[RMDB]
RNA sequence: GGGAACGACUCGAGUAGAGUCGAAAAACGAGUCCGUACGCGGACUCGAAGGGCCCCAGAAGACCAAGGGGCCCAAACCUACCACUCAUAAGAUGCAUGGAAAUCACUAGGUGAUACGUCACCUAGAACACGCUUUUAAGCUUCGGCUUAAAAGCAACUCGUAAAGAUCGUUCGCGAUCUUUACGAGAAAAGAAACAACAACAACAAC
Reactivity to 2A3 in 0.01 (KOAc 150mM, MgCl2 10mM, bicine 150mM(pH8.5), 24C), signal-to-noise 1, nucleotides 027 to 156: a000c000g000a000g000u010c030c000g010u010a000c200g000c000g080g000a000c010u020c000g040a010a000g000g000g000c000c000c000c000a130g150a300a040g040a050c050c020a100a130g000g000g010g020c040c000c030a000a000a000c010c000u100a120c010c040a080c060u050c000a060u120a270a070g060a060u090g120c060a010u100g010g110a110a110a080u120c020a050c070u000a010g000g010u000g040a010u000a070c250g100u030c000a000c000c000u000a000g000a000a000c070a000c070g010c000u000u000u000u000a000a000g000c000u000u090c200g140g000c000u000u000a000a000a000a000g000c000a000a000

Structure probing data (2A3) for a 207-nucleotide construct. Conditions: 150 mM KOAc, 10 mM MgCl2 and 150 mM bicine (pH 8.5), 24 C. The data come from the RNA Mapping Database (RMDB), library M2RFPK.